The record gives the reactivity of an RNA of 207 nucleotides to 2A3. For 2A3, 424 sequencing reads were counted. 2A3 adducts were read by reverse transcription with SuperScript II with manganese.

RNA sequence: GGGAACGACUCGAGUAGAGUCGAAAAAUGGGAUGCUAUCCAAGCAGGUGCUGUUAGUCCUAGUAGAUUGAAAGACAUACUGGACAACAUGCGUGACGAAGACAUCAAAGCAUUGGCCACACCACGUGUACAAACAGCUAUGAGUCCUGUCAAGAAGGUUUAAGAACGGCUUCGGCCGUUCUUAAACAAAAGAAACAACAACAACAAC
Reactivity to 2A3 in 0.01 (KOAc 150mM, MgCl2 10mM, bicine 150mM(pH8.5), 24C), signal-to-noise 1, nucleotides 027 to 156: a000u080g180g010g020a030u020g240c020u040a070u110c020c020a060a000g010c030a020g000g150u060g000c000u030g000u150u000a110g000u000c000c030u020a000g000u000a000g050a150u040u300g140a220a110a000g100a030c060a060u030a000c040u020g000g020a000c000a010a000c020a080u150g000c050g080u080g010a050c050g020a030a020g020a020c020a140u110c060a000a070a000g040c030a030u000u110g040g030c050c000a060c000a060c040c020a060c210g000u030g000u000a020c020a000a050a000c020a020g000c020u000a060u100g000a000g020u010c000c000u030g030u070c060a050a000g040a030a100g130